Structure probing data (DMS and 2A3) for a 177-nucleotide construct. Conditions: 150 mM KOAc, 10 mM MgCl2 and 150 mM bicine (pH 8.5), 24 C. DMS adducts were read by reverse transcription with MarathonRT. Values cover nucleotides 27 to 126.
RNA sequence: GGGAACGACUCGAGUAGAGUCGAAAAGAACGCCAAGAGGCGAGACCGAGACCGACAAUCACGCUAACUCGGAAAAGUGGAAUAGCGUCAGGAGUCCACUGUCGGAAAAGCCGAAAGAACGGCAGAACAGUGCGAUACCAUUCGUGGUAUCGCACUGAAAAGAAACAACAACAACAAC
Reactivity to DMS in 0.01 (KOAc 150mM, MgCl2 10mM, bicine 150mM(pH8.5), 24C), signal-to-noise 2, nucleotides 027 to 126: g080a140a050c020g070c000c000a150a140g100a110g000g000c000g010a070g000a290c000c000g000a120g000a300c130c010g000a000c020a040a210u000c150a020c050g060c040u000a010a120c100u000c080g000g000a000a050a040a020g000u000g010g040a160a030u060a010g000c090g050u150c210a080g020g000a170g000u000c000c030a060c170u000g000u000c030g000g000a120a020a100a120g020c070c000g000a150a100a220g060a160a070c000g020g000c050a070g000a010a120
Reactivity to 2A3 in 0.01 (KOAc 150mM, MgCl2 10mM, bicine 150mM(pH8.5), 24C), signal-to-noise 2, nucleotides 027 to 126: g110a020a030c030g000c020c010a300a060g220a180g080g000c000g000a000g000a000c010c000g000a030g010a050c000c060g040a000c000a010a010u080c000a010c030g000c060u110a120a080c060u030c060g060g000a030a080a070a120g030u130g020g050a060a060u050a010g010c030g040u050c070a060g000g130a000g030u000c030c030a050c000u030g000u000c000g030g000a020a030a030a030g060c000c010g000a000a010a010g220a070a000c000g000g050c000a070g060a090a000